[RMDB]
RNA sequence: GGGAACGACUCGAGUAGAGUCGAAAACCGAGUGAGUUCGCUCACUCGGAAAGAAGUGUGCGCAUACUGCUGCGAGAGUAGCGACAAGAGCAGCAAGCAAAAAAACAAACCUGUUCGCAGGUUUGAACACAAAUCUAUGGUUCGCCAUAGAUUUGUGAAAAGAAACAACAACAACAAC
Reactivity to 2A3 in 0.01 (KOAc 150mM, MgCl2 10mM, bicine 150mM(pH8.5), 24C), signal-to-noise 4, nucleotides 027 to 126: c010c000g000a010g000u000g000a010g010u010u190c190g030c110u000c000a000c000u000c000g000g030a040a050a010g070a080a040g080u100g020u060g070c050g000c060a070u080a180c060u080g020c000u020g000c030g010a070g010a010g090u100a020g070c030g060a060c060a100a060g020a020g100c030a010g000c030a010a040g030c080a030a070a080a030a010a010a030c000a000a010a010c000c000u010g020u050u070c230g000c040a000g000g000u000u010u000g020a050a010
Reactivity to DMS in 0.01 (KOAc 150mM, MgCl2 10mM, bicine 150mM(pH8.5), 24C), signal-to-noise 5, nucleotides 027 to 126: c000c000g000a030g020u010g000a020g030u010u010c220g010c010u000c000a010c000u010c000g000g000a000a040a060g010a130a080g010u010g030u000g010c060g010c070a120u010a120c130u010g020c010u000g020c020g010a200g000a140g000u000a040g010c080g000a080c110a070a080g000a180g010c010a030g000c040a060a090g020c090a000a000a050a070a050a040a170c010a010a010a000c000c000u000g010u000u010c160g040c000a010g000g000u000u000u000g000a060a180
Source: RMDB library M2PK50, as collected in RNAgym.
An RNA of 177 nucleotides, treated with 2A3 and DMS and read out base by base.
The RNA was probed in 150 mM KOAc, 10 mM MgCl2 and 150 mM bicine (pH 8.5) at 24 C.
The DMS profile rests on 4,749 reads.